[RMDB]
RNA sequence: GGGAACGACUCGAGUAGAGUCGAAAACUCCAGCCCGUAUGAUCGGCCUAACGUGACCGCCCUAUGGCAAGGACGGGAUUCUGCCUAUCAGGCAUGAACUAAGCGGUCGCGUAGCGGCCACCUCCCCAUACGGUAUAUGCUUCGGCAUAUACCGUAUAAAAGAAACAACAACAACAAC
Reactivity to 2A3 in 0.01 (KOAc 150mM, MgCl2 10mM, bicine 150mM(pH8.5), 24C), signal-to-noise 9, nucleotides 027 to 126: c020u040c020c000a020g050c020c000c000g070u110a080u180g140a140u170c110g000g010c000c000u060a090a030c010g010u010g010a000c000c000g030c010c000c020u140a140u170g130g040c060a070a040g070g010a030c050g030g000g000a020u050u000c000u030g000c000c010u150a240u250c100a030g010g010c040a030u210g010a030a030c040u070a090a050g010c000g000g000u010c000g000c000g010u010a040g080c060g010g000c000c000a010c000c000u010c000c000c000c000
Reactivity to DMS in 0.01 (KOAc 150mM, MgCl2 10mM, bicine 150mM(pH8.5), 24C), signal-to-noise 4, nucleotides 027 to 126: c080u010c040c040a090g010c000c010c010g000u020a090u030g010a090u040c170g000g030c000c000u010a230a070c020g020u000g010a010c050c020g020c010c000c050u000a130u020g010g010c110a140a080g010g020a180c080g020g000g000a300u000u000c010u010g000c000c000u000a130u020c280a100g010g020c050a020u020g000a050a030c060u010a120a140g030c030g000g000u000c000g040c010g020u000a040g030c170g000g010c010c000a080c090c060u000c000c000c000c070

Chemical mapping of a 177-nucleotide RNA with 2A3 and DMS. Conditions: 150 mM KOAc, 10 mM MgCl2 and 150 mM bicine (pH 8.5), 24 C. Source: RMDB libraries RFM100 and RFMREP, as collected in RNAgym.